[RMDB]
RNA sequence: GGGAACGACUCGAGUAGAGUCGAAAAUUGAUAUCUGCUAAAACCCGGAGCAUUCAUCAAUGCAGGUUAAGCCAAAGGGAUGUCCCGACCGGAGGCCGACAAUCCAGGGAACCGGAUGUCAUCACGUAAAACCGUCAGUUCUUCGGAACUGACGGAACACUUUAUAGCACUUCGGUGCUAUAAAGUGAAAAGAAACAACAACAACAAC
Reactivity to DMS in 0.01 (KOAc 150mM, MgCl2 10mM, bicine 150mM(pH8.5), 24C), signal-to-noise 1, nucleotides 027 to 156: u000u000g000a090u010a040u010c050u010g020c060u000a060a090a160a300c000c000c040g040g050a230g040c000a040u000u010c110a060u010c120a030a080u010g010c020a110g000g010u000u000a040a030g000c020c000a010a300a280g040g000g020a090u000g010u020c010c030c000g010a120c040c000g000g000a300g000g000c010c070g000a070c080a050a130u000c000c090a050g010g000g000a040a140c190c040g030g000a040u000g020u000c010a100u000c070a050c090g080u000a060a020a110a090c000c000g000u010c050a020g000u000u000c000u000u020c290g030g000a020a020c010u000g040a010c000g010g000a010a040
Reactivity to 2A3 in 0.01 (KOAc 150mM, MgCl2 10mM, bicine 150mM(pH8.5), 24C), signal-to-noise 1, nucleotides 027 to 156: u050u010g020a010u020a020u040c000u010g000c060u110a060a010a110a170c000c010c020g040g020a020g000c010a010u060u100c070a090u220c070a140a080u040g010c020a040g060g090u070u150a040a000g010c000c000a010a000a000g010g000g020a030u050g050u010c000c000c010g010a000c000c000g010g000a010g000g000c010c000g020a040c030a080a080u020c040c040a060g020g000g000a020a020c030c020g000g000a010u000g000u020c010a040u080c070a020c120g090u090a010a020a100a180c000c010g010u000c000a000g020u000u000c000u000u120c200g080g000a000a000c000u000g010a000c010g000g000a000a000

This 207-nucleotide RNA was probed chemically with DMS and 2A3. The RNA was probed in 150 mM KOAc, 10 mM MgCl2 and 150 mM bicine (pH 8.5) at 24 C. For DMS, 1,439 sequencing reads were counted. It was measured as part of the RMDB library M2RFPK.